[RMDB]
RNA sequence: GGGAACGACUCGAGUAGAGUCGAAAACUGCGGCGAGCGGACAAGUGCCCUGAGCUAGACUCCCUGAGUGACCAGUGCAGACAGCUGUCCGCUCAGAUCCCCCGGGACCCUCAGCCAGUGGCACAGACCUGCUAGUGGAUUUCGAUCCACUAGCAGGAAAAGAAACAACAACAACAAC
Reactivity to 2A3 in 0.01 (KOAc 150mM, MgCl2 10mM, bicine 150mM(pH8.5), 24C), signal-to-noise 3, nucleotides 027 to 126: c020u020g000c010g100g000c040g030a040g010c000g010g000a010c040a170a100g020u020g030c000c010c020u080g000a050g000c030u030a030g010a140c300u010c020c030c050u070g030a030g050u050g060a090c020c030a020g020u030g040c030a040g050a250c060a030g140c020u010g010u010c010c010g000c030u000c000a000g030a090u080c000c020c000c000c030g000g030g010a040c030c000c000u030c000a010g000c010c000a060g000u210g030g000c000a030c000a020g040a050
Reactivity to DMS in 0.01 (KOAc 150mM, MgCl2 10mM, bicine 150mM(pH8.5), 24C), signal-to-noise 1, nucleotides 027 to 126: c020u000g090c000g040g000c090g000a050g030c000g000g050a000c050a120a060g000u010g030c100c010c000u000g010a180g000c000u000a110g060a020c190u000c000c140c100u010g000a050g040u000g010a170c000c000a050g050u000g000c020a090g000a100c160a050g030c000u030g000u000c000c010g010c000u000c010a080g020a110u000c020c060c000c000c000g000g110g000a000c000c010c160u000c020a000g000c030c000a020g000u000g000g020c120a010c110a070g000a190

Structure probing data (2A3 and DMS) for a 177-nucleotide construct. Values cover nucleotides 27 to 126. High 2A3 reactivity points to a flexible backbone, as in loops and unpaired stretches. The RNA was probed in 150 mM KOAc, 10 mM MgCl2 and 150 mM bicine (pH 8.5) at 24 C. 2A3 adducts were read by reverse transcription with SuperScript II with manganese. For 2A3, 1,996 sequencing reads were counted.